Structure probing data (2A3 and DMS) for a 177-nucleotide construct. For 2A3, 1,078 sequencing reads were counted. The RNA was probed in 150 mM KOAc, 10 mM MgCl2 and 150 mM bicine (pH 8.5) at 24 C. The DMS profile rests on 3,034 reads.
RNA sequence: GGGAACGACUCGAGUAGAGUCGAAAAUCGCUCAAGGAUCUCACUCCCUGUUGUGCACUGCAUGGUUAGCCAACUGGAUUCAUGCAAAAUCCACCUUUUGUAUAUGAAGGCUGAUUAAGUCUUCUGAUCACUUGGGUUUAUUCGUAAACCCAAGUGAAAAAGAAACAACAACAACAAC
Reactivity to 2A3 in 0.01 (KOAc 150mM, MgCl2 10mM, bicine 150mM(pH8.5), 24C), signal-to-noise 1, nucleotides 027 to 126: u050c000g000c010u020c060a000a070g080g020a060u000c050u010c070a050c060u020c040c020c000u060g060u190u050g010u060g000c010a020c070u000g000c030a070u090g040g070u060u090a010g030c020c000a080a170c120u040g060g000a010u140u000c070a070u140g020c000a000a000a030a130u000c000c000a060c010c000u090u090u090u050g080u050a070u000a060u220g030a020a000g020g000c000u030g060a300u010u290a070a000g000u040c000u010u020c010u030g030a030
Reactivity to DMS in 0.01 (KOAc 150mM, MgCl2 10mM, bicine 150mM(pH8.5), 24C), signal-to-noise 3, nucleotides 027 to 126: u000c080g020c060u010c090a090a120g000g010a050u000c040u000c080a100c100u000c030c000c030u000g020u000u000g010u010g010c100a080c100u000g010c060a080u000g000g010u010u000a090g010c030c040a070a090c100u010g000g010a060u000u020c080a040u000g010c080a060a060a030a060u020c010c070a110c140c060u000u000u000u010g010u000a090u000a100u010g000a010a020g000g010c030u000g010a120u010u020a070a040g020u000c020u000u000c000u010g010a180